[RMDB]
RNA sequence: GGGAACGACUCGAGUAGAGUCGAAAAAUGACACAUCAUCGCAGGAAGUAAAGCUCGCGCUGUGGCUAGAUUUCGUUGAGCAUGUUCGGAGUUUAGACCUGCGUUCAAUGCGAGCACCGCAACUGAAACGCCACGUAGUCUUCGGACUACGUGGCGUAAAAGAAACAACAACAACAAC
Reactivity to 2A3 in 0.01 (KOAc 150mM, MgCl2 10mM, bicine 150mM(pH8.5), 24C), signal-to-noise 2, nucleotides 027 to 126: a010u090g010a020c060a000c000a120u060c040a060u110c020g100c040a070g130g050a140a010g040u140a190a050a100g040c020u020c000g000c000g030c060u120g170u090g150g010c010u020a000g000a060u040u000u000c030g000u000u140g230a250g110c180a190u300g120u040u010c000g000g000a010g000u000u010u010a070g060a240c000c000u140g040c020g040u150u060c000a030a030u030g070c030g010a040g020c000a000c010c010g210c000a040a110c040u050g030a110a120